[RMDB]
RNA sequence: GGGAACGACUCGAGUAGAGUCGAAAACUACAGACCUGUGAACAGAAUGAGAUGCUUUCCAUUGGGAUAGAAGAAGUGUUUGAUAUUUUGCCCCUGUUUGGAGUGUUGCAGCCACACAGUAGCCACCUACCUAGACUAGAUUCGUCUAGUCUAGGUAAAAAGAAACAACAACAACAAC
Reactivity to 2A3 in 0.01 (KOAc 150mM, MgCl2 10mM, bicine 150mM(pH8.5), 24C), signal-to-noise 6, nucleotides 027 to 126: c020u070a030c020a030g110a100c000c010u040g010u040g090a080a020c010a060g110a130a110u120g010a060g020a090u070g030c020u040u060u020c020c010a070u050u120g040g020g030a040u050a110g090a120a020g030a060a010g040u040g070u100u140u130g090a060u070a110u150u060u070u090g030c010c000c000c000u010g100u100u100u080g040g010a040g010u040g060u070u100g020c020a010g020c000c000a020c000a000c000a030g020u010a010g040c010c020a030c020c010
Reactivity to DMS in 0.01 (KOAc 150mM, MgCl2 10mM, bicine 150mM(pH8.5), 24C), signal-to-noise 9, nucleotides 027 to 126: c040u000a070c100a090g010a120c100c030u000g010u000g000a090a110c080a050g000a100a060u000g000a100g010a060u000g000c050u000u010u000c020c030a130u000u000g010g000g010a080u000a040g010a070a060g010a070a060g010u000g000u000u010u000g010a110u000a090u000u000u000u000g010c050c010c040c050u000g000u000u000u010g010g010a080g010u000g010u010u000g010c060a070g000c030c020a050c050a040c060a050g010u000a080g010c040c050a070c100c080
Structure probing data (2A3 and DMS) for a 177-nucleotide construct.
The RNA was probed in 150 mM KOAc, 10 mM MgCl2 and 150 mM bicine (pH 8.5) at 24 C.